[RMDB]
Source: RMDB library RFM130, as collected in RNAgym. Structure probing data (2A3 and DMS) for a 207-nucleotide construct. Reactivities are given for positions 27 through 156. The RNA was probed in 150 mM KOAc, 10 mM MgCl2 and 150 mM bicine (pH 8.5) at 24 C. For DMS the reverse transcriptase was MarathonRT.
RNA sequence: GGGAACGACUCGAGUAGAGUCGAAAAGUCUCUUGUUUCUCUUAGAGAAGUAAGCUUGGUUUAUGGUUCCAGGCUAGUCUAAAUAGUUGUCGAGUUCGCAGCUUCGGCUCGGAUGAGUGACGCUGUUUAUGAUGAACGUCCCAUAGUAGGUUGAUAACUCUAAGUUUACGUUCGCGUAAACUUAGAGAAAAGAAACAACAACAACAAC
Reactivity to 2A3 in 0.01 (KOAc 150mM, MgCl2 10mM, bicine 150mM(pH8.5), 24C), signal-to-noise 3, nucleotides 027 to 156: g030u000c010u000c000u070u060g040u020u110u000c030u000c030u130u160a040g010a010g010a080a020g040u090a100a010g020c000u000u000g020g000u060u040u020a030u090g020g040u020u060c000c000a010g020g000c000u010a010g000u000c000u000a020a010a010u040a010g020u050u300g010u040c020g040a050g050u000u020c000g040c140a000g000c000u050u050c180g120g010c000u000c000g020g040a020u060g050a060g130u180g020a010c010g000c000u000g010u010u010u000a190u270g000a010u030g000a050a000c060g100u080c000c000c020a000u010a010g090u070a040g000g110u080u100g050a070u160a150a040
Reactivity to DMS in 0.01 (KOAc 150mM, MgCl2 10mM, bicine 150mM(pH8.5), 24C), signal-to-noise 2, nucleotides 027 to 156: g050u000c020u000c050u000u000g020u000u000u000c020u000c020u020u020a170g010a130g000a100a180g000u000a110a090g000c040u000u020g030g040u000u000u010a140u000g030g050u000u000c010c000a020g010g010c010u020a200g030u000c040u000a020a050a040u000a040g000u020u010g100u000c000g020a300g020u000u000c020g030c120a050g020c020u000u000c300g040g040c010u000c010g000g000a030u000g010a230g080u010g020a030c040g020c000u010g020u000u010u000a010u010g040a030u000g010a200a090c110g020u020c040c000c000a120u000a130g020u000a110g030g010u000u010g010a100u000a110a170